[RMDB]
RNA sequence: GGGAACGACUCGAGUAGAGUCGAAAAUUACACUGAGAGCAUUUAGCCUGAUUACUCUUUAAAUCAAAUCAGGCAAUAGAGAGAAACUCGAGAGGUGAAAACCCCACAGCAUUCUGAAAUAUAUUUGAAGGCAACGCUACCUUCGGGUAGCGUUGAAACCUAUUGCAUCGUUCGCGAUGCAAUAGGUAAAAGAAACAACAACAACAAC
Reactivity to 2A3 in 0.01 (KOAc 150mM, MgCl2 10mM, bicine 150mM(pH8.5), 24C), signal-to-noise 1, nucleotides 027 to 156: u120u020a040c010a030c120u230g040a030g000a000g030c110a020u020u000u070a040g070c050c000u000g000a000u080u050a080c000u090c100u040u300u130a100a050a000u270c080a000a000a000u010c000a010g020g020c000a000a000u070a020g010a000g000a010g010a050a180a050c030u010c060g020a020g000a040g050g070u020g070a080a020a000a030c010c000c240c030a080c040a040g150c070a140u150u080c010u060g000a030a150a000u240a030u040a070u150u210u300g130a080a050g030g000c000a000a000c000g000c000u000a000c000c010u000u000c000g000g020g000u000a000g000c000g000u000u000g000a000a000

An RNA of 207 nucleotides, treated with 2A3 and read out base by base. For 2A3 the reverse transcriptase was SuperScript II with manganese. The reactions ran in a buffer of 150 mM KOAc, 10 mM MgCl2 and 150 mM bicine (pH 8.5), at 24 C. For 2A3, 648 sequencing reads were counted.